Background:
Source: RMDB library OK2TST, as collected in RNAgym. Chemical mapping of a 177-nucleotide RNA with DMS and 2A3. DMS adducts were read by reverse transcription with MarathonRT. Values are in units of 0.01, from 0 to 300, in steps of 10. For 2A3 the reverse transcriptase was SuperScript II with manganese. Values cover nucleotides 27 to 126.

[RMDB]
RNA sequence: GGGAACGACUCGAGUAGAGUCGAAAAUUCUGCGGUGCGAUAGGACGAAGUUGAGCGGUGGUCAUGAUUCUCCAAUCUGUUAGGUAUCCGGCAAUUAACACGAGAUUUGCUGCCCCUGUAUCGAGCACUUAGGAUAUCAAUUCGUUGAUAUCCUAAGAAAAGAAACAACAACAACAAC
Reactivity to DMS in 0.01 (KOAc 150mM, MgCl2 10mM, bicine 150mM(pH8.5), 24C), signal-to-noise 9, nucleotides 027 to 126: u000u000c030u000g020c080g000g010u010g010c050g020a080u010a090g010g000a080c070g000a090a090g010u010u010g010a090g020c070g010g020u000g010g000u000c050a060u000g000a120u000u000c040u000c050c080a070a080u010c060u000g010u000u000a050g010g010u000a070u010c080c040g010g010c050a040a060u000u010a060a080c100a100c140g010a100g000a080u000u000u000g010c040u010g000c070c020c010c090u000g010u000a080u000c060g000a080g010c180a100
Reactivity to 2A3 in 0.01 (KOAc 150mM, MgCl2 10mM, bicine 150mM(pH8.5), 24C), signal-to-noise 6, nucleotides 027 to 126: u060u010c010u040g050c020g020g020u040g010c030g020a050u050a080g040g010a020c030g050a070a040g070u100u090g030a030g040c030g030g030u040g020g020u030c030a030u080g070a080u060u020c040u000c020c010a030a080u030c030u050g060u090u060a050g030g030u040a070u030c040c020g010g010c020a040a090u110u060a110a010c050a020c130g060a070g020a150u030u030u080g010c020u030g000c000c000c000c010u020g030u060a120u100c050g020a040g060c030a020